RNA sequence: GGGAACGACUCGAGUAGAGUCGAAAAGGGGUCUUAUCUGAAAGAUAGGAAAUCAAUGUAUCAAAGAGAUAGCUGCACUCCCAUCUUUAUUGAAGCACUAUUCACAAUAUCCAAAAUACAGAUUCAAGCAGUGUCCAUCAAUGAAUGAGUGAAUCAAACAUAUCAAACACUUCGGUGUUUGAUAUGUAAAAGAAACAACAACAACAAC
Reactivity to DMS in 0.01 (KOAc 150mM, MgCl2 10mM, bicine 150mM(pH8.5), 24C), signal-to-noise 3, nucleotides 027 to 156: g020g030g030g040u000c010u000u000a050u010c010u010g000a130a140a140g010a060u010a070g000g010a050a080a060u000c060a070a160u010g000u000a120u000c040a060a100a160g010a130g000a050u000a060g030c030u010g030c050a160c070u000c020c010c000a150u000c050u000u000u010a100u010u020g000a100a200g030c040a050c040u000a080u000u000c050a090c050a040a080u000a060u000c060c050a020a040a050a080u000a140c050a060g020a130u000u000c050a060a100g010c070a050g020u000g010u000c040c010a050u000c040a070a120u010g020a050a070u010g020a100g030u000g010a070a110u000c050a080a140
Reactivity to 2A3 in 0.01 (KOAc 150mM, MgCl2 10mM, bicine 150mM(pH8.5), 24C), signal-to-noise 5, nucleotides 027 to 156: g030g000g000g040u000c020u030u020a020u000c030u070g170a080a100a040g040a020u040a030g030g040a040a070a040u120c060a060a100u090g070u110a070u070c070a080a110a020g070a020g010a040u050a040g060c040u030g000c040a040c030u040c030c010c000a040u060c050u040u160u070a120u050u100g030a080a020g030c010a020c060u050a070u080u090c040a030c030a120a050u040a040u150c040c040a050a070a070a010u130a060c050a010g030a030u040u120c060a060a040g020c020a020g030u000g030u050c060c020a050u060c030a070a070u080g070a050a050u070g020a020g090u060g020a010a030u070c040a030a120